Overview
The data come from the RNA Mapping Database (RMDB), library OK2TST. Chemical mapping of a 177-nucleotide RNA with DMS and 2A3. The RNA was probed in 150 mM KOAc, 10 mM MgCl2 and 150 mM bicine (pH 8.5) at 24 C. 2A3 adducts were read by reverse transcription with SuperScript II with manganese. The 2A3 profile rests on 8,952 reads. Values cover nucleotides 27 to 126.
[RMDB]
RNA sequence: GGGAACGACUCGAGUAGAGUCGAAAAAUGUCAUAUGACUGAGUCCCAUAUCUUAUUAGGUUGAACUAAGUGAAACACAUGACUCCUCAUACCUAAAUUGCGAUCAAGCAAGCCCCGAAGAUAAAGGGAUUCAUUUAGAUUUCGAUCUAAAUGAAUCAAAAGAAACAACAACAACAAC
Reactivity to DMS in 0.01 (KOAc 150mM, MgCl2 10mM, bicine 150mM(pH8.5), 24C), signal-to-noise 7, nucleotides 027 to 126: a080u010g000u000c010a180u010a090u010g010a040c020u000g010a190g000u000c020c010c010a170u010a040u010c050u000u000a110u000u000a020g000g020u000u000g000a060a090c100u010a070a140g000u000g010a080a090a120c170a110c110a080u000g000a040c060u000c120c030u000c040a030u010a050c040c010u000a020a030a110u000u000g000c030g010a080u010c190a100a150g000c020a030a050g000c040c000c010c030g010a070a050g010a050u000a030a100a130g000g020
Reactivity to 2A3 in 0.01 (KOAc 150mM, MgCl2 10mM, bicine 150mM(pH8.5), 24C), signal-to-noise 7, nucleotides 027 to 126: a000u060g000u010c020a050u120a130u300g010a010c030u020g020a010g070u000c010c010c010a020u050a030u040c040u090u100a140u060u080a060g030g030u030u030g040a060a040c030u040a130a060g040u050g130a130a130a000c100a010c020a100u130g040a050c020u010c020c010u030c010a040u070a130c000c000u010a060a090a070u010u020g000c020g070a120u150c130a090a060g000c000a030a010g020c020c000c000c030g020a030a010g020a060u130a070a080a010g100g020